[RMDB]
RNA sequence: GGGAACGACUCGAGUAGAGUCGAAAAAUGAGAGUUAACCCAGGAGAAAGCGUCACUCUCUACUCUGACUGCGCUGUACUGUUUGGAUCUCACAUUGUUUGGAUAAGAAACUGCUCGCAUGAGAAUAUCCUGCCAUACCAUUCGUGGUAUGGCAGGAAAAAGAAACAACAACAACAAC
Reactivity to DMS in 0.01 (KOAc 150mM, MgCl2 10mM, bicine 150mM(pH8.5), 24C), signal-to-noise 2, nucleotides 027 to 126: a030u000g000a100g020a040g010u000u010a100a130c010c000c010a160g000g000a120g020a080a070a100g000c090g000u010c090a040c040u000c020u000c050u000a080c040u000c020u030g000a110c090u000g000c050g040c100u000g010u000a050c070u000g000u000u010u000g020g000a060u000c020u020c070a020c110a110u000u000g000u000u010u000g020g010a100u020a070a130g010a040a060a040c060u030g000c010u000c070g000c100a040u000g010a080g010a100a130u000a070